[RMDB]
RNA sequence: GGGAACGACUCGAGUAGAGUCGAAAAGAAAACUGCGGUAAAGAAGCGGACCAAAAGCUCGGCCAAGAAAAGGCCGAGCAAAGGUGCGCAAAGAACGGGCCGCAAUCGUUCAAGAAAGAAAAGAAAAAUAUAUCAGUGAGUUCGCUCACUGAUAUAUAAAAGAAACAACAACAACAAC
Reactivity to DMS in 0.01 (KOAc 150mM, MgCl2 10mM, bicine 150mM(pH8.5), 24C), signal-to-noise 3, nucleotides 027 to 126: g010a090a040a090a060c190u000g000c030g000g020u010a110a080a120g000a210a110g020c010g010g000a010c000c000a060a160a080a120g010c000u010c000g000g000c000c000a020a160g070a070a140a230a030g010g010c010c000g040a000g010c000a000a060a120g000g010u000g000c000g020c000a050a060a100g000a050a080c130g010g010g030c010c010g000c000a020a040u020c050g010u000u000c040a070a100g000a070a130a090g000a070a010a070a100g010a050a070a080a090
Reactivity to 2A3 in 0.01 (KOAc 150mM, MgCl2 10mM, bicine 150mM(pH8.5), 24C), signal-to-noise 4, nucleotides 027 to 126: g050a000a090a010a030c050u020g000c000g040g010u180a130a160a080g090a140a010g020c000g000g080a000c000c000a000a060a080a080g000c010u000c000g010g010c000c010a140a070g190a230a150a010a000g010g010c000c010g010a000g000c000a000a000a000g010g000u040g040c010g040c000a070a050a000g020a060a020c040g030g100g000c000c000g000c000a010a040u020c010g010u020u030c040a070a040g090a140a100a020g110a040a130a080a000g170a010a190a030a000

Conditions: 150 mM KOAc, 10 mM MgCl2 and 150 mM bicine (pH 8.5), 24 C. An RNA of 177 nucleotides, treated with DMS and 2A3 and read out base by base. For 2A3 the reverse transcriptase was SuperScript II with manganese. Reactivities are given for positions 27 through 126.